[RMDB]
RNA sequence: GGGAACGACUCGAGUAGAGUCGAAAAGUGGUUGGGUCAACUGAAGUAGCAACGUCACUUGAGCUAGUUUGAUCAACUGAGGUUGAAAUGACUACAGAAGUAGUUGGGUCAACUAAAGUAGUCACAGCGUCCUCCAGGGUUUCGACCCUGGAGGACGAAAAGAAACAACAACAACAAC
Reactivity to 2A3 in 0.01 (KOAc 150mM, MgCl2 10mM, bicine 150mM(pH8.5), 24C), signal-to-noise 1, nucleotides 027 to 126: g130u080g010g010u060u060g090g060g080u160c000a000a010c000u070g230a210a000g100u060a000g000c000a020a000c000g090u020c040a080c050u030u090g080a030g020c060u080a150g090u060u100u190g020a020u000c000a120a120c020u020g000a060g000g000u000u000g030a020a270a180u150g000a000c000u000a000c000a000g230a280a000g080u240a060g000u000u080g100g070g010u080c000a000a000c020u020a000a000a110g110u070a000g100u110c000a020c000a000g040